[RMDB]
An RNA of 170 nucleotides, treated with 2A3 and DMS and read out base by base. Reactivities are given for positions 27 through 129.

RNA sequence: GGGAACGACUCGAGUAGAGUCGAAAAUUGAAGGUAAAACAGCCUGUGGGUGAAACACACCCACAGGGCCCAUCGGGCGCUAGCACUCAGGUAUCACGGUACCUUUGUGCGCCUGUUUUACCGAAGGCCACUUUCGGCUUCGGCCGAAAGAAAAGAAACAACAACAACAAC
Reactivity to 2A3 in 0.01 (KOAc 150mM, MgCl2 10mM, bicine 150mM(pH8.5), 24C), signal-to-noise 2, nucleotides 027 to 129: u130u130g070a090a040g000g000u000a000a010a000a000c000a000g010c000c000u000g000u000g020g000g000u020g040a070a100a010c150a000c000a000c060c000c000a000c010a000g000g000g000c010c000c000a120u230c180g000g000g000c010g010c040u080a050g010c010a010c020u000c010a000g010g000u000a000u030c020a000c210g130g020u000a000c000c000u000u000u000g000u000g000c000g000c000c000u000g000u000u000u000u000a000c000c010g000a000a000g050g030c010c000a050
Reactivity to DMS in 0.01 (KOAc 150mM, MgCl2 10mM, bicine 150mM(pH8.5), 24C), signal-to-noise 3, nucleotides 027 to 129: u000u000g000a290a180g000g050u020a030a000a030a020c020a000g040c040c000u000g000u010g010g000g090u000g040a080a110a090c300a120c030a020c000c000c000a030c010a020g000g030g040c030c000c010a010u070c190g000g040g020c050g000c000u000a050g020c020a020c010u040c060a000g000g060u020a010u020c050a080c210g040g000u030a000c000c030u100u000u010g020u010g000c100g030c000c030u040g010u000u010u010u040a000c000c040g000a010a010g010g030c030c050a110
The reactions ran in a buffer of 150 mM KOAc, 10 mM MgCl2 and 150 mM bicine (pH 8.5), at 24 C.